[RMDB]
RNA sequence: GGGAACGACUCGAGUAGAGUCGAAAAAGCGGUGGUGUACGCACCACCGCAAGAACUAAACGGGAAAAGUUGUAUGCUAUAUGUCAAUGUGUAUAUCAUAAGCGUAUAGCUUUUCCCCUUAGUCUAACGAACUGUUGUUUUUCGAAACAACAGUUCGAAAAGAAACAACAACAACAAC
Reactivity to DMS in 0.01 (KOAc 150mM, MgCl2 10mM, bicine 150mM(pH8.5), 24C), signal-to-noise 1, nucleotides 027 to 126: a070g000c010g000g000u000g010g080u000g020u070a110c300g050c010a010c000c000a000c000c030g000c000a010a000g010a080a070c010u010a000a020a030c300g000g060g030a000a000a000a000g000u010u000g010u000a000u000g000c000u000a020u000a080u010g020u000c090a110a070u020g050u100g020u030a050u020a060u040c050a000u000a050a040g000c010g010u000a000u000a000g040c000u000u000u000u000c000c000c000c030u000u010a000g000u000c030u010a040a150
Reactivity to 2A3 in 0.01 (KOAc 150mM, MgCl2 10mM, bicine 150mM(pH8.5), 24C), signal-to-noise 6, nucleotides 027 to 126: a000g010c000g030g000u010g040g010u020g030u050a070c280g020c090a000c000c000a000c000c010g010c000a000a000g010a010a000c010u010a000a000a030c030g000g000g000a000a000a000a010g000u000u010g010u000a000u000g000c000u010a020u010a050u300g070u120c110a190a130u230g130u090g060u230a080u080a060u250c010a010u000a010a010g000c010g000u000a000u000a000g000c000u000u000u000u000c000c000c000c000u000u000a000g000u000c020u030a080a050